[RMDB]
RNA sequence: GGGAACGACUCGAGUAGAGUCGAAAAAUAAGUUUAGUGUUUUAUAGGUACUUAAUAGAGAGUGUGUAUGCAUGUGUGUGUGCUUGUGGUGGCUAUGGAAAGGGGGCACUGACUGGUGAUGCUGAUAGUAAGAUGUUCUGUUCGCAGAACAUCUUACAAAAGAAACAACAACAACAAC
Reactivity to DMS in 0.01 (KOAc 150mM, MgCl2 10mM, bicine 150mM(pH8.5), 24C), signal-to-noise 1, nucleotides 027 to 126: a070u010a020a050g010u000u000u010a070g010u000g010u000u000u000u000a090u010a080g000g010u010a030c050u020u000a060a070u010a050g000a080g010a060g030u010g020u010g000u010a060u000g030c050a050u000g000u010g020u010g030u010g020u000g020c060u000u010g010u000g010g010u000g000g000c070u020a070u000g010g000a040a060a130g010g000g010g010g010c060a040c060u000g000a060c080u000g000g010u010g010a070u000g010c020u010g000a130u000a100
Reactivity to 2A3 in 0.01 (KOAc 150mM, MgCl2 10mM, bicine 150mM(pH8.5), 24C), signal-to-noise 1, nucleotides 027 to 126: a010u120a080a030g020u000u000u120a080g020u040g000u020u050u040u090a170u080a090g040g030u050a080c010u110u120a090a030u090a140g090a010g000a020g000u050g030u000g040u080a040u130g010c060a060u070g060u010g000u000g020u030g000u020g070c000u050u040g030u040g020g020u000g000g030c050u090a120u090g000g000a000a050a050g000g000g020g010g000c010a010c010u070g050a020c010u010g020g030u020g020a040u120g010c000u010g040a010u030a020